[RMDB]
RNA sequence: GGGAACGACUCGAGUAGAGUCGAAAAGAAGAUAUGAUGACAUUGAGUAAUGCGAUGGGUGCUAUAACAGCUAAUUCUCAAUCAUGUGCAAUGAGUGAUGUUCAUCCAGCUAUGUCAUACAUACUCGACCGAGAUCCUAUUUCGAUAGGAUCUCGGUAAAAGAAACAACAACAACAAC
Reactivity to 2A3 in 0.01 (KOAc 150mM, MgCl2 10mM, bicine 150mM(pH8.5), 24C), signal-to-noise 2, nucleotides 027 to 126: g090a000a020g010a020u000a010u010g000a010u010g000a000c010a020u040u130g050a060g130u180a270a120u120g010c050g040a020u060g000g050g010u060g000c060u070a030u040a300a020c020a030g000c000u000a060a030u170u000c000u030c000a060a120u060c080a080u160g110u110g110c060a020a080u010g010a020g000u050g050a180u090g000u040u040c000a010u020c000c000a000g020c000u020a010u030g010u000c000a000u050a080c010a010u000a010c050u000c010g030
Reactivity to DMS in 0.01 (KOAc 150mM, MgCl2 10mM, bicine 150mM(pH8.5), 24C), signal-to-noise 2, nucleotides 027 to 126: g010a130a090g010a170u000a000u000g010a030u000g000a040c010a020u010u000g030a110g020u010a090a130u000g040c160g000a070u010g010g010g070u010g010c300u000a100u010a060a080c140a050g000c020u010a020a130u000u010c070u010c020a050a070u010c150a060u010g010u000g000c210a050a020u000g000a040g010u000g000a120u010g010u000u000c000a020u020c010c000a080g000c020u000a050u000g000u000c000a000u000a140c020a010u000a000c100u000c000g010